[RMDB]
RNA sequence: GGGAACGACUCGAGUAGAGUCGAAAAUAAAUCACUAUUCGUUGUCAACAAUGUGAGGACGCUCCUUGUGAAAUCAUCUGUCCAACCGGUGCAAUGAGCAAUCUGGGAGUGGAUGUUACCAAGUGCAAUCACUAUAAUGGUUCGCCAUUAUAGUGAUAAAAGAAACAACAACAACAAC
Reactivity to DMS in 0.01 (KOAc 150mM, MgCl2 10mM, bicine 150mM(pH8.5), 24C), signal-to-noise 8, nucleotides 027 to 126: u030a060a090a090u010c040a020c030u010a090u030u010c110g000u000u010g000u010c130a050a080c110a070a070u000g010u000g000a050g000g020a100c050g010c010u000c040c010u000u010g010u010g000a130a150a080u010c010a010u000c090u010g010u000c030c040a140a120c170c130g000g020u040g000c030a060a040u010g000a080g020c040a070a100u010c020u010g010g000g000a060g020u000g000g010a080u010g010u020u010a120c020c030a040a070g010u010g000c150a120
Reactivity to 2A3 in 0.01 (KOAc 150mM, MgCl2 10mM, bicine 150mM(pH8.5), 24C), signal-to-noise 9, nucleotides 027 to 126: u120a000a080a040u070c040a020c090u130a100u110u130c100g040u050u060g130u120c030a040a040c020a120a130u110g050u050g040a050g040g040a010c010g000c010u020c000c000u030u040g040u030g120a090a110a030u030c010a000u010c070u070g060u040c030c010a100a100c150c120g030g000u110g010c010a030a090u080g010a050g050c030a030a050u050c030u060g010g000g010a030g020u030g020g020a040u060g060u100u040a050c010c010a080a030g040u030g090c040a060